An RNA of 177 nucleotides, treated with 2A3 and read out base by base. The RNA was probed in 150 mM KOAc, 10 mM MgCl2 and 150 mM bicine (pH 8.5) at 24 C. Source: RMDB library OK1LIB, as collected in RNAgym.
RNA sequence: GGGAACGACUCGAGUAGAGUCGAAAACCCGGCAAGGAUCCAGAACAGCGACCGCGCCGCGUUCAUGAUCGUCGUCUCCCAGCCCUUGGCGGCGGUAACAACCUGGUUCUCCAACGUGGUGAGCACGGGGUGCAUAGCUGUUCGCAGCUAUGCACCCAAAAGAAACAACAACAACAAC
Reactivity to 2A3 in 0.01 (KOAc 150mM, MgCl2 10mM, bicine 150mM(pH8.5), 24C), signal-to-noise 2, nucleotides 027 to 126: c010c010c000g000g020c000a050a080g010g010a010u040c020c000a000g050a060a000c010a060g010c040g060a060c000c050g050c110g000c060c000g020c010g000u000u020c030a160u190g080a110u050c020g060u010c000g070u000c020u030c020c000c030a100g000c030c000c020u040u040g050g050c040g000g040c090g000g000u010a070a150c100a010a030c000c000u020g000g020u000u040c020u000c060c010a060a060c010g090u040g010g000u040g030a060g100c000a000c020g000